[RMDB]
RNA sequence: GGGAACGACUCGAGUAGAGUCGAAAAUGGAUUCGUUAGGGGCGAUGAAGAGUGUGGCUUCAAGUUGCUACAAAGAUAUGCCGACGUGGUUUCGUACAUCUACAAUGUACCCCACAAGCCAAAGAACCGAGCAGGAUCAACAAUCACAAUUGAUUGGCUUGUCGAUUUAUUUCGAUAAAUCGACAAGAAAAGAAACAACAACAACAAC
Reactivity to DMS in 0.01 (KOAc 150mM, MgCl2 10mM, bicine 150mM(pH8.5), 24C), signal-to-noise 2, nucleotides 027 to 156: u000g020g040a160u000u010c070g020u000u020a110g010g020g000g040c040g000a160u000g020a030a090g030a140g040u010g010u010g030g020c030u000u010c050a090a250g000u000u010g010c010u010a220c050a100a100a110g020a140u000a050u000g030c020c000g000a140c100g050u000g030g000u000u000u000c040g000u020a020c000a020u020c060u010a130c240a090a100u000g000u000a000c000c080c030c040a060c030a050a160g030c040c030a000a070a130g000a080a070c080c030g010a120g000c030a090g000g010a100u000c000a050a050c010a010a020u010c000a060c060a110a160u010u010g010a040u000u010g010g000
Reactivity to 2A3 in 0.01 (KOAc 150mM, MgCl2 10mM, bicine 150mM(pH8.5), 24C), signal-to-noise 4, nucleotides 027 to 156: u070g050g010a000u010u060c060g010u080u060a070g000g010g020g010c050g030a060u070g010a060a030g020a030g050u060g030u040g030g010c020u040u040c070a100a030g040u070u050g020c000u040a040c030a080a140a010g060a050u100a030u130g040c030c000g010a050c060g010u030g010g000u040u110u190c080g000u000a010c000a020u010c040u070a040c070a100a020u030g000u010a020c030c010c000c000a020c010a000a020g000c030c010a110a170a020g020a060a060c050c010g010a010g000c030a030g020g040a030u090c030a010a040c000a030a010u030c040a010c050a210a300u090u090g020a040u020u020g030g020